[RMDB]
RNA sequence: GGGAACGACUCGAGUAGAGUCGAAAAACUCGGACGCGAACCGUGAGUGGAACCCUGAUCCUUUAUUGGGGAGUACACUCGAGGAGUGGAAGGCGUUGUUGGGGGGGAGAUGGGCUUACCUACGGGAAAACAGUAUCGUUCGCGAUACUGAAAAGAAACAACAACAACAAC
Reactivity to DMS in 0.01 (KOAc 150mM, MgCl2 10mM, bicine 150mM(pH8.5), 24C), signal-to-noise 9, nucleotides 027 to 129: a060c060u020c020g030g000a090c100g000c000g000a080a080c010c020g000u040g030a050g020u020g000g020a160a170c020c000c020u020g010a060u040c300c140u020u020u020a040u040u020g000g000g000g000a050g000u040a180c040a040c030u000c040g030a050g020g030a050g050u020g010g020a080a070g000g000c040g040u030u050g020u050u020g030g000g030g030g020g020g000a060g000a080u040g000g010g010c070u030u040a090c040c050u070a090c120g040g020g020a080a060a080a150
Reactivity to 2A3 in 0.01 (KOAc 150mM, MgCl2 10mM, bicine 150mM(pH8.5), 24C), signal-to-noise 8, nucleotides 027 to 129: a000c020u020c020g030g030a000c030g010c030g060a080a040c010c010g050u070g030a020g020u020g000g030a080a070c000c000c010u020g010a050u130c060c080u150u170u220a080u070u090g010g000g000g000a000g030u050a030c020a030c010u010c010g000a050g020g020a040g030u140g030g030a020a020g050g010c070g030u020u080g070u050u060g040g020g000g010g000g010g000a040g020a040u080g010g020g000c000u040u090a110c000c010u030a080c050g030g010g000a030a050a020a030